[RMDB]
The record gives the reactivity of an RNA of 177 nucleotides to DMS and 2A3. The reactions ran in a buffer of 150 mM KOAc, 10 mM MgCl2 and 150 mM bicine (pH 8.5), at 24 C.

RNA sequence: GGGAACGACUCGAGUAGAGUCGAAAAGGGUUUAGCAGCGGUUAAGUUGCUGAUCGACGACGUACCCUUUAUUUUUUAAGUCGUCGAAGAGGUACGUUUUUUCAGCUUUAAUUGCUGCUUUACCCAAGGGUGGUUGUGUGUUCGCGUGCGACCACCCAAAAGAAACAACAACAACAAC
Reactivity to DMS in 0.01 (KOAc 150mM, MgCl2 10mM, bicine 150mM(pH8.5), 24C), signal-to-noise 6, nucleotides 027 to 126: g000g010g000u010u000u000a010g010c010a000g010c000g000g000u000u010a010a010g000u030u020g020c000u000g010a010u020c300g010a100c210g010a010c000g000u000a000c010c000c000u000u010u020a010u000u010u040u040u030u040a090a140g010u020c130g010u030c130g010a010a010g000a130g010g010u000a010c000g010u000u000u000u010u010u000c000a000g010c000u020u000u000a010a010u000u000g010c000u010g000c000u000u000u000a010c000c000c010a050a070
Reactivity to 2A3 in 0.01 (KOAc 150mM, MgCl2 10mM, bicine 150mM(pH8.5), 24C), signal-to-noise 9, nucleotides 027 to 126: g000g000g000u000u010u010a000g000c000a000g000c010g060g030u010u010a050a020g300u300u070g050c000u000g000a020u040c060g100a090c100g000a000c000g010u010a010c000c000c000u000u030u010a060u020u090u020u010u020u080a120a090g080u100c070g050u070c110g060a010a000g050a050g000g010u010a010c040g010u010u000u010u010u040u020c000a000g000c000u000u010u010a000a000u000u010g000c000u000g000c000u000u000u000a000c000c000c000a010a010
Reactivities are given for positions 27 through 126.